Structure probing data (DMS) for a 177-nucleotide construct.
Reactivities are given for positions 27 through 126.
For DMS the reverse transcriptase was MarathonRT.
Values are in units of 0.01, from 0 to 300, in steps of 10.
RNA sequence: GGGAACGACUCGAGUAGAGUCGAAAAGAUAUGGAGAUCCCAGUGGACAUGUAAAUACAGUCCUAUACGGAGAUCGGAAACGAUCUUUAUAGGACUGUAUUUACAACAGCCACGGAUCUCCUAAGUCCCGUAGAACAGUGUUCGCACUGUUCUACGGAAAAGAAACAACAACAACAAC
Reactivity to DMS in 0.01 (KOAc 150mM, MgCl2 10mM, bicine 150mM(pH8.5), 24C), signal-to-noise 2, nucleotides 027 to 126: g040a190u020a240u000g000g010a020g010a030u000c010c020c300a120g060u000g000g020a010c100a160u000g030u000a000a000a010u000a010c000a010g010u000c000c000u000a020u000a040c300g010g000a010g000a000u000c040g000g020a140a090a300c010g000a000u000c010u010u000u000a050u010a000g000g000a000c000u000g000u000a010u000u000u000a000c010a040a100c150a200g020c000c000a030c000g020g000a040u000c000u000c040c000u000a010a070g030u000c010